[RMDB]
RNA sequence: GGGAACGACUCGAGUAGAGUCGAAAAACACAAUACUGCAGAGAUAAUGCAAGACAAUCUAGAGCUUUCCAUAAGCAAUGGAUAAUAUUCAGGCACAAUUGCCACAUUUCCAAUGAUGUAUGCAAAAACGUAUCCAGCACUUCGGUGCUGGAUACGUAAAAGAAACAACAACAACAAC
Reactivity to 2A3 in 0.01 (KOAc 150mM, MgCl2 10mM, bicine 150mM(pH8.5), 24C), signal-to-noise 2, nucleotides 027 to 126: a000c300a010c130a020a040u300a190c000u070g000c090a000g220a000g000a190u000a110a000u000g010c000a070a070g110a030c010a090a150u000c000u000a020g050a050g220c020u000u050u040c030c000a120u160a220a100g000c030a020a020u030g000g030a000u050a010a030u050a230u130u140c260a130g000g000c000a030c000a010a250u250u250g010c000c000a040c040a040u080u080u000c000c000a020a030u150g010a010u120g080u140a080u100g080c160a000a000a270a000